[RMDB]
RNA sequence: GGGAACGACUCGAGUAGAGUCGAAAAGAUAUGGACUUCACAGGGAGAUCUAGGUCGGAAACGACCUUCUGAUCAUCGAUCUGUAAGUCCUAAGUCAAACCCCGAGAUCUCUUCGGAGAUCUCGGGGGUUGGUACGGUACUUCGGUACCGUACCAACAAAAGAAACAACAACAACAAC
Reactivity to 2A3 in 0.01 (KOAc 150mM, MgCl2 10mM, bicine 150mM(pH8.5), 24C), signal-to-noise 2, nucleotides 027 to 126: g000a010u010a010u050g000g000a010c010u020u030c250a000c040a030g030g020g010a030g000a010u010c020u060a010g050g000u000c000g000g000a030a010a000c000g000a020c020c000u040u010c140u100g000a000u000c000a010u300c010g000a010u000c000u050g000u000a000a000g010u000c000c000u010a000a000g000u000c000a020a010a300c000c020c010c010g000a010g000a010u000c000u010c030u130u270c300g150g000a010g000a010u000c030u000c000g000g000g000g000
Reactivity to DMS in 0.01 (KOAc 150mM, MgCl2 10mM, bicine 150mM(pH8.5), 24C), signal-to-noise 3, nucleotides 027 to 126: g010a010u000a010u020g000g000a020c000u000u000c300a000c000a030g000g010g000a010g020a010u010c000u000a020g020g010u000c000g020g000a000a000a020c000g010a020c010c000u000u000c180u010g000a010u010c000a300u010c250g000a000u000c000u000g000u000a020a010g000u000c000c000u000a000a070g000u000c000a130a140a300c010c000c000c000g010a010g010a000u000c010u000c000u000u020c250g040g000a000g000a010u010c000u000c000g000g030g020g000
The data come from the RNA Mapping Database (RMDB), library TTRDES. Chemical mapping of a 177-nucleotide RNA with 2A3 and DMS. Values cover nucleotides 27 to 126. For 2A3, 6,863 sequencing reads were counted. The reactions ran in a buffer of 150 mM KOAc, 10 mM MgCl2 and 150 mM bicine (pH 8.5), at 24 C. For DMS, 3,346 sequencing reads were counted. High 2A3 reactivity points to a flexible backbone, as in loops and unpaired stretches. In probing experiments dimethyl sulfate is read out at A N1 and C N3, which are open when not base-paired.